[RMDB]
RNA sequence: GGGAACGACUCGAGUAGAGUCGAAAAACUAAGGCAAAGAGAAGAGUGGUGCAGAGAGAAAAAAGAGCAGUGGGAAUAGGAGCUGUACUCCUUGGGUUCUUGGGAGCAGCAGGAAGCACUAUGGGCGUUUAUUCCAGGUUUUCGAACCUGGAAUAAAAAAAGAAACAACAACAACAAC
Reactivity to DMS in 0.01 (KOAc 150mM, MgCl2 10mM, bicine 150mM(pH8.5), 24C), signal-to-noise 6, nucleotides 027 to 126: a080c060u010a090a080g000g000c090a070a070a070g000a080g000a060a050g010a070g040u000g000g030u000g010c050a050g000a130g020a110g010a000a050a040a060a060a050g000a070g010c050a040g020u010g010g000g010a070a060u020a070g000g000a080g000c050u000g010u020a160c060u010c020c010u000u020g000g010g010u010u010c040u000u000g000g000g000a030g020c060a040g010c070a050g000g010a040a080g010c040a060c080u000a070u020g010g000g010c080g010
Reactivity to 2A3 in 0.01 (KOAc 150mM, MgCl2 10mM, bicine 150mM(pH8.5), 24C), signal-to-noise 5, nucleotides 027 to 126: a000c050u100a030a050g090g010c050a090a050a000g060a020g000a090a020g030a030g030u040g020g030u020g010c040a020g010a010g020a010g050a090a050a010a010a020a030g080a010g000c040a030g030u070g040g010g040a050a020u060a110g060g010a020g010c030u050g040u060a080c010u010c000c000u040u040g120g000g010u110u070c030u020u080g000g000g020a030g010c010a000g000c000a000g050g030a050a010g030c030a020c040u060a050u070g030g010g030c030g000